[RMDB]
RNA sequence: GGGAACGACUCGAGUAGAGUCGAAAACAGGUUUACUUCGGUAAACCUGAAAUAAAGCCGCAGUGGGCUAGCGCCACUCAAAGGCCCGAAAAUAAAUAAAUAAAACCCGUCUCUUCGGAGACGGGAAGUGACCAUAUAAGUUCGCUUAUAUGGUCACAAAAGAAACAACAACAACAAC
Reactivity to DMS in 0.01 (KOAc 150mM, MgCl2 10mM, bicine 150mM(pH8.5), 24C), signal-to-noise 1, nucleotides 027 to 126: c000a000g000g000u010u010u010a010c000u000u000c120g010g010u000a010a000a000c000c010u010g000a020a050a090u000a140a100a230g020c110c040g020c140a050g060u030g000g010g030c020u010a110g020c160g040c080c020a000c080u000c040a060a020a210g000g000c000c010c030g000a040a110a050a120u000a060a060a040u000a050a080a080u010a090a080a120a060c030c000c010g010u000c010u010c000u000u040c140g000g000a030g000a000c000g010g010g000a010a000
Reactivity to 2A3 in 0.01 (KOAc 150mM, MgCl2 10mM, bicine 150mM(pH8.5), 24C), signal-to-noise 1, nucleotides 027 to 126: c000a000g000g000u030u000u020a000c000u040u110c180g100g000u020a000a000a000c000c000u000g000a000a000a010u020a010a040a000g000c020c040g010c050a030g020u060g060g100g020c060u010a070g040c070g040c040c020a040c010u040c000a180a190a050g100g020c010c030c010g030a060a050a010a000u200a010a060a030u100a030a060a030u140a040a140a020a030c000c010c000g000u000c000u000c000u030u030c220g060g000a000g000a010c020g000g000g000a000a000